Description:
The record gives the reactivity of an RNA of 177 nucleotides to DMS and 2A3. Reactivities are rounded to 0.1 and cut off at 0 and 3.
RNA sequence: GGGAACGACUCGAGUAGAGUCGAAAAUGUUAUUUUUUGUGACACAGAUGUUCUCUGUUUACAUUAGAUUUUUCCAAACUGUUAGCAGUCAGGUGCGGUGAUUCACACCUGUAAUCCCAGCACAUUGGUCAUUACUCAGUUUCGACUGAGUAAUGACAAAAGAAACAACAACAACAAC
Reactivity to DMS in 0.01 (KOAc 150mM, MgCl2 10mM, bicine 150mM(pH8.5), 24C), signal-to-noise 3, nucleotides 027 to 126: u010g010u010u010a000u000u010u010u000u000u000g020u000g000a020c270a020c020a040g000a060u010g000u020u000c070u010c000u000g000u000u000u000a020c010a020u000u010a020g000a040u000u000u000u000u010c040c050a110a090a090c070u010g010u010u000a080g000c060a070g010u000c020a010g030g020u000g010c040g010g010u000g010a150u000u010c040a020c030a030c030c030u000g010u000a060a080u000c030c010c010a120g010c110a060c160a100u010u000g010
Reactivity to 2A3 in 0.01 (KOAc 150mM, MgCl2 10mM, bicine 150mM(pH8.5), 24C), signal-to-noise 2, nucleotides 027 to 126: u120g040u060u030a050u030u040u020u010u040u040g000u020g030a010c010a000c000a080g010a030u070g110u270u090c030u000c000u010g010u000u000u040a010c020a020u020u030a050g030a100u020u030u030u060u080c050c000a040a080a030c030u020g020u190u110a050g010c030a020g010u080c000a000g060g000u020g000c040g020g120u150g090a040u150u140c010a020c010a020c020c040u010g020u010a010a060u000c000c000c000a010g040c040a040c020a080u130u180g040
2A3 is a SHAPE reagent: it acylates the 2'-hydroxyl of flexible nucleotides of all four kinds. The reactions ran in a buffer of 150 mM KOAc, 10 mM MgCl2 and 150 mM bicine (pH 8.5), at 24 C. DMS adducts were read by reverse transcription with MarathonRT.